[RMDB]
RNA sequence: GGGAACGACUCGAGUAGAGUCGAAAAAGAGUACGGCCGCAAGGUUUCCGGUUGUGGAUGGCAGCGUGUGUGUCGCCCCGUCGUCUAGUGCUGCUUCUAGGGCUGGGGCGUCAGCAUCCAGGUAAAACAUUACGUGCUAUUUCGAUAGCACGUAAUGAAAAGAAACAACAACAACAAC
Reactivity to 2A3 in 0.01 (KOAc 150mM, MgCl2 10mM, bicine 150mM(pH8.5), 24C), signal-to-noise 2, nucleotides 027 to 126: a000g090a030g020u070a030c040g000g010c020c030g010c040a050a040g060g000u010u060u060c020c020g030g030u090u080g080u080g070g050a090u050g050g040c040a030g000c070g000u110g030u080g040u020g000u050c000g000c010c010c000c000g030u040c010g030u020c030u010a020g010u040g070c090u080g010c000u130u000c010u010a020g070g010g000c080u140g020g010g000g000c000g020u000c010a000g000c010a030u010c020c010a000g050g050u080a070a130a000a000
Reactivity to DMS in 0.01 (KOAc 150mM, MgCl2 10mM, bicine 150mM(pH8.5), 24C), signal-to-noise 5, nucleotides 027 to 126: a080g010a110g020u000a080c080g000g010c020c020g020c140a080a070g010g010u000u000u000c040c020g010g010u010u000g030u000g020g010a060u000g010g000c090a060g010c100g020u010g010u000g010u000g010u000c020g020c010c010c010c000g010u000c030g000u010c010u000a030g010u000g010c090u000g000c090u000u000c010u000a030g010g000g000c010u000g030g000g000g000c010g000u000c020a080g000c030a040u000c040c020a090g010g010u000a040a050a080a140
The record gives the reactivity of an RNA of 177 nucleotides to 2A3 and DMS. For DMS, 10,279 sequencing reads were counted. 2A3 adducts were read by reverse transcription with SuperScript II with manganese. The RNA was probed in 150 mM KOAc, 10 mM MgCl2 and 150 mM bicine (pH 8.5) at 24 C. The data come from the RNA Mapping Database (RMDB), library M2PK90.